Chemical mapping of a 207-nucleotide RNA with 2A3. For 2A3, 658 sequencing reads were counted. Reactivities are rounded to 0.1 and cut off at 0 and 3.
RNA sequence: GGGAACGACUCGAGUAGAGUCGAAAAUCGAAAGUUCGCUUUCGAAAAAAUCCUAAGUCGAGCAUCGAUCUCCUGGGAGGCAUCGAUCUAUCGGAAACGAUAGGGAGCCUCCCGGGAGGGAGCUCGAUAUGGAAAAAAAUGAUGCUUCGGCAUCAAAGAGAAAAAACAGAUUCGUCUGUUUUUUCUCAAAAGAAACAACAACAACAAC
Reactivity to 2A3 in 0.01 (KOAc 150mM, MgCl2 10mM, bicine 150mM(pH8.5), 24C), signal-to-noise 1, nucleotides 027 to 156: u030c000g000a030a010a000g030u080u100c190g040c100u000u010u010c010g000a100a000a000a000a100a060u060c000c010u020a080a000g000u000c010g020a000g000c040a220u180c000g070a080u040c010u000c000c000u000g010g000g000a000g020g000c040a120u290c060g070a080u010c020u010a000u000c010g050g000a120a040a130c000g000a010u000a000g000g000g000a000g000c000c000u020c000c000c020g000g000g000a000g010g000g000a000g000c000u010c000g000a000u000a030u020g000g000a060a020a020a000a120a010a160u300g020a000u230g000c000u050u050c260g170g010c010a000u000c010a000a060a020